This 177-nucleotide RNA was probed chemically with 2A3 and DMS. High 2A3 reactivity points to a flexible backbone, as in loops and unpaired stretches. Source: RMDB library OK1LIB, as collected in RNAgym. Reactivities are given for positions 27 through 126.
RNA sequence: GGGAACGACUCGAGUAGAGUCGAAAAGAAAAAGAGGCAGAGCCUUUACUCUCAUACACCCCAUUGUAUUGGGUGGAUUGCUCUGUUAUAGACUGUGGGCAGGUUACUUAGGAUGUCCUCAGAGAAAAUCGGGUAUCACUUUCGAGUGAUACCCGAUAAAAGAAACAACAACAACAAC
Reactivity to 2A3 in 0.01 (KOAc 150mM, MgCl2 10mM, bicine 150mM(pH8.5), 24C), signal-to-noise 2, nucleotides 027 to 126: g070a000a070a000a000a010g090a070g120g000c000a000g000a000g000c010c000u040u030u060a160c000u010c000u000c000a030u070a000c000a040c010c010c000c010a040u010u110g060u000a180u170u120g030g000g000u030g050g020a070u110u000g000c000u000c000u000g000u030u000a070u020a000g130a000c000u000g000u020g080g000g000c000a050g080g050u150u190a130c180u200u220a070g130g160a170u000g000u000c000c000u010c000a020g000a000g030a000a000a000
Reactivity to DMS in 0.01 (KOAc 150mM, MgCl2 10mM, bicine 150mM(pH8.5), 24C), signal-to-noise 2, nucleotides 027 to 126: g000a100a080a050a150a070g000a060g010g020c010a000g010a000g030c010c110u000u000u000a100c020u010c000u010c110a070u000a070c030a050c160c050c080c100a050u080u000g030u000a060u000u050g020g020g000u000g000g010a000u010u020g020c000u000c030u010g010u000u030a080u100a020g000a170c010u000g000u010g000g000g020c020a030g000g030u020u070a150c300u040u060a040g000g020a130u000g030u000c010c010u000c000a050g000a030g010a110a030a100